[RMDB]
RNA sequence: GGGAACGACUCGAGUAGAGUCGAAAAUGGUGCGUGUGUACCCAAUGUGUGGGUGUGGCUGAGCCGGGAGAGCAUCUCAGUGGGGAGCCUGUGAGACCCAGUGUUGUGUCCAGGUGUCAUCUGCACGUGUCCGAAAAUAGUUCGCUAUUUUCGGACAAAAAGAAACAACAACAACAAC
Reactivity to DMS in 0.01 (KOAc 150mM, MgCl2 10mM, bicine 150mM(pH8.5), 24C), signal-to-noise 3, nucleotides 027 to 126: u020g000g010u000g020c040g030u030g020u010g030u010a100c020c040c050a080a100u010g020u020g020u010g000g020g050u010g020u000g000g000c020u000g000a180g000c080c040g010g000g000a140g020a130g010c090a080u010c030u000c070a060g060u020g000g000g020g010a120g030c030c040u000g010u010g000a050g000a070c030c020c010a120g000u010g000u010u000g000u000g010u010c030c050a040g010g010u020g000u030c090a050u020c080u010g020c030a060c120g000
Reactivity to 2A3 in 0.01 (KOAc 150mM, MgCl2 10mM, bicine 150mM(pH8.5), 24C), signal-to-noise 3, nucleotides 027 to 126: u160g010g000u020g010c030g000u100g010u040g040u100a070c000c000c030a070a150u120g050u020g020u050g040g040g010u070g050u110g070g020c040u030g000a010g010c000c000g000g020g030a050g010a000g010c000a100u000c020u010c030a070g030u080g000g040g000g000a030g040c000c020u100g030u080g030a070g030a120c000c060c010a010g030u020g030u060u040g020u030g030u000c000c030a020g010g000u010g060u020c040a140u030c030u040g010c020a010c070g060